Structure probing data (DMS and 2A3) for a 177-nucleotide construct.
RNA sequence: GGGAACGACUCGAGUAGAGUCGAAAACGCUCGAUCAGGCCGUCAGUGUAAAAGAGGAUCGCGUCGCCGAUGUUGAGCACUUCACUGCGCACUGGAAAUCCGGUUCCGCUGCCGAGCGGACCCGCGCCUAAGAGGGACUAUUCGUAGUCCCUCUUAGAAAAGAAACAACAACAACAAC
Reactivity to DMS in 0.01 (KOAc 150mM, MgCl2 10mM, bicine 150mM(pH8.5), 24C), signal-to-noise 7, nucleotides 027 to 126: c050g010c020u000c020g010a060u010c070a090g010g000c040c040g010u000c020a030g010u000g010u010a050a090a100a100g010a100g010g010a070u000c060g020c040g010u010c060g030c080c130g010a070u010g010u000u000g010a160g010c050a090c060u000u000c060a060c080u000g010c200g000c040a050c050u000g000g010a060a080a140u010c160c030g000g010u010u010c050c020g010c040u000g010c300c080g000a040g010c010g000g000a070c030c010c010g010c220g010c130
Reactivity to 2A3 in 0.01 (KOAc 150mM, MgCl2 10mM, bicine 150mM(pH8.5), 24C), signal-to-noise 5, nucleotides 027 to 126: c010g010c000u000c020g050a110u070c030a040g000g050c010c020g070u080c020a020g000u010g050u110a080a110a040a010g090a030g050g050a080u080c030g010c020g140u080c050g080c170c090g040a060u100g060u210u240g020a030g010c050a030c020u060u060c030a040c100u050g020c030g000c030a010c030u030g020g050a050a160a100u070c050c010g000g030u070u060c050c020g030c040u020g070c050c020g060a010g000c000g000g000a010c000c000c010g040c020g040c000

Notes:
The 2A3 profile rests on 6,161 reads. The data come from the RNA Mapping Database (RMDB), library OK2TST. Reactivities are given for positions 27 through 126.